Description: Structure probing data (DMS) for a 177-nucleotide construct. It was measured as part of the RMDB library TTRINS. DMS adducts were read by reverse transcription with MarathonRT. Reactivities are given for positions 27 through 126.

RNA sequence: GGGAACGACUCGAGUAGAGUCGAAAAGAUAUGGACCUUUUCAGCACGUCCCAUGUAGACAUGCGUUGGUGUCGGAAACGACAUAACGCAACAGCUACUGUGGGACGUGCUGAAAAGGUCCUAAGUCCGUUUUUAGGUAGUUCGCUACCUAAAAACGAAAAGAAACAACAACAACAAC
Reactivity to DMS in 0.01 (KOAc 150mM, MgCl2 10mM, bicine 150mM(pH8.5), 24C), signal-to-noise 2, nucleotides 027 to 126: g010a150u010a300u000g000g010a030c010c010u000u000u000u000c000a010g020c010a010c000g000u000c000c000c010a020u010g000u000a010g010a050c090a280u000g010c000g040u000u020g010g040u000g030u040c000g000g000a110a120a260c010g020a040c010a020u000a010a000c000g000c010a010a030c300a190g000c000u010a010c000u010g070u010g000g030g020a010c000g020u000g020c000u000g000a010a000a000a000g030g010u000c000c000u000a010a120g000u000c050